Source information
The record gives the reactivity of an RNA of 207 nucleotides to 2A3. Values cover nucleotides 27 to 156. Source: RMDB library RNAMAK, as collected in RNAgym. For 2A3, 1,513 sequencing reads were counted. The reactions ran in a buffer of 150 mM KOAc, 10 mM MgCl2 and 150 mM bicine (pH 8.5), at 24 C. 2A3 adducts were read by reverse transcription with SuperScript II with manganese.
[RMDB]
RNA sequence: GGGAACGACUCGAGUAGAGUCGAAAAGGGGUCGGACGACAUGCACCUAAAGGCUCGAAGAACUACUGAAGCCUCCACGGUAGGGAGAGCCCUAGGUGCAACAGCGUCCGACGGAGGCACCCAAAGACAUAUUAGGGAUUCGUCCCUAAUAUGUCAACUAGGUCCAAAGAUUCGUCUUUGGACCUAGAAAAGAAACAACAACAACAAC
Reactivity to 2A3 in 0.01 (KOAc 150mM, MgCl2 10mM, bicine 150mM(pH8.5), 24C), signal-to-noise 1, nucleotides 027 to 156: g070g030g030g030u010c010g010g000a000c020g000a020c080a210u300g010c000a010c000c010u070a100a080a070g020g000c020u040c010g180a300a000g000a030a010c000u010a010c000u020g050a140a000g020c000c000u000c000c000a010c000g000g040u000a000g000g030g000a010g010a000g010c010c000c000u000a000g020g030u010g000c000a020a000c010a010g010c000g000u000c000c000g000a000c000g000g000a000g020g000c010a030c030c020c010a100a090a000g010a000c000a000u000a000u010u000a000g000g020g000a030u000u090c200g040u010c020c000c000u000a000a000u000a000u010g000u000c000a000a000